[RMDB]
RNA sequence: GGGAACGACUCGAGUAGAGUCGAAAACGCAGAGGGUUCUGAUAACAAAGAACCUAGAUAGCCGCAACGGUAUUAUAGGAUGUAGUCGGUGAGCCGGAAUGCCUGCAUCGUAAGCCUAUAAGUAAAUUUAAGUGUAAUCACUUCGGUGAUUACACAACGCCCUAAUAGCGUUCGCGCUAUUAGGGCGAAAAGAAACAACAACAACAAC
Reactivity to 2A3 in 0.01 (KOAc 150mM, MgCl2 10mM, bicine 150mM(pH8.5), 24C), signal-to-noise 1, nucleotides 027 to 156: c070g000c030a030g050a120g050g000g010u020u040c040u030g070a100u100a250a000c000a050a060a000g010a010a000c000c020u030a020g010a080u060a040g040c090c070g020c060a090a040c070g010g000u090a040u070u050a010u060a030g020g000a020u050g060u130a020g160u020c010g030g040u050g040a000g060c110c090g120g060a000a090u120g000c020c010u020g010c000a000u020c040g000u060a000a140g030c000c000u050a020u080a040a070g100u120a110a160a300u160u200u040a080a070g000u000g000u000a000a000u000c000a000c000u020u020c150g030g010u000g000a000u000u010a000c010a000c000a010a000